Chemical mapping of a 177-nucleotide RNA with 2A3 and DMS.
The data come from the RNA Mapping Database (RMDB), library OK2TST.
For 2A3, 940 sequencing reads were counted.
The DMS profile rests on 1,527 reads.
The RNA was probed in 150 mM KOAc, 10 mM MgCl2 and 150 mM bicine (pH 8.5) at 24 C.
For DMS the reverse transcriptase was MarathonRT.
For 2A3 the reverse transcriptase was SuperScript II with manganese.
RNA sequence: GGGAACGACUCGAGUAGAGUCGAAAACGCGAUCCAUCCAUCUCUCAGUGAAUACAAUCCUGCUUUCUUGAGAUACUCAUUACUCAGCGCUUGCUGUAUCCCUGGUGUUUUCGAGCUUCGCCACGGCAUCCGCCAGUCAAUUCGUUGACUGGCGGAUAAAAGAAACAACAACAACAAC
Reactivity to 2A3 in 0.01 (KOAc 150mM, MgCl2 10mM, bicine 150mM(pH8.5), 24C), signal-to-noise 1, nucleotides 027 to 126: c040g000c000g020a050u000c010c000a040u040c020c000a060u030c020u040c010u000c070a090g010u050g140a090a020u120a140c030a050a050u060c000c000u020g040c030u120u110u090c010u060u080g010a020g000a060u120a090c050u000c030a060u070u090a040c010u020c060a010g020c090g030c090u090u180g020c000u030g050u160a170u030c030c000c000u010g000g070u040g030u050u020u060u130c060g010a000g030c010u110u060c010g060c020c010a060c030g070g030c050
Reactivity to DMS in 0.01 (KOAc 150mM, MgCl2 10mM, bicine 150mM(pH8.5), 24C), signal-to-noise 2, nucleotides 027 to 126: c100g040c090g000a120u000c050c010a080u010c050c020a050u010c030u000c010u010c000a090g020u040g000a090a080u000a100c130a090a100u010c020c000u000g020c060u020u000u000c050u000u030g010a090g010a080u000a070c120u010c070a070u030u000a090c080u000c050a040g030c050g000c090u000u000g030c030u000g000u000a100u000c020c020c000u000g000g020u010g000u000u000u000u010c040g010a080g020c060u010u000c040g010c020c020a020c130g000g010c070